[RMDB]
RNA sequence: GGGAACGACUCGAGUAGAGUCGAAAAGCCCAUAUGUUCGCAUAUGGGCAAAAGCAGAUCUGACCAUGCGAGCUCUCUGCGACAAAAGUCAACGCAAUAAAAAAACACGUCACUUCGGUGACGUGAAUCAAUAUAACCUCUUCGGAGGUUAUAUUGAAAAAGAAACAACAACAACAAC
Reactivity to DMS in 0.01 (KOAc 150mM, MgCl2 10mM, bicine 150mM(pH8.5), 24C), signal-to-noise 4, nucleotides 027 to 126: g000c000c000c000a020u010a010u000g010u000u010c230g060c000a010u000a000u000g000g020g020c010a000a010a040a090g010c020a020g010a040u000c030u000g000a110c050c050a130u010g020c050g000a160g010c040u000c030u000c040u000g010c030g020a070c160a050a080a090a110g010u010c080a040a080c090g020c070a050a090u040a010a000a060a070a080a090a130c000a000c010g000u010c000a000c000u000u000c130g040g020u000g000a010c000g020u000g000a030a050
Reactivity to 2A3 in 0.01 (KOAc 150mM, MgCl2 10mM, bicine 150mM(pH8.5), 24C), signal-to-noise 4, nucleotides 027 to 126: g000c000c000c000a000u000a000u000g000u000u070c190g000c110a000u000a010u010g000g020g000c040a040a040a000a010g000c010a000g020a070u190c030u050g040a050c030c030a040u110g020c020g040a020g030c010u020c000u010c010u040g010c000g040a050c060a030a200a020a010g040u080c050a080a070c040g020c060a060a070u230a200a100a020a010a010a000a010c000a000c000g000u000c000a000c010u020u080c250g080g000u000g000a000c000g010u010g010a000a010

Conditions: 150 mM KOAc, 10 mM MgCl2 and 150 mM bicine (pH 8.5), 24 C. An RNA of 177 nucleotides, treated with DMS and 2A3 and read out base by base. The data come from the RNA Mapping Database (RMDB), library M2PK50.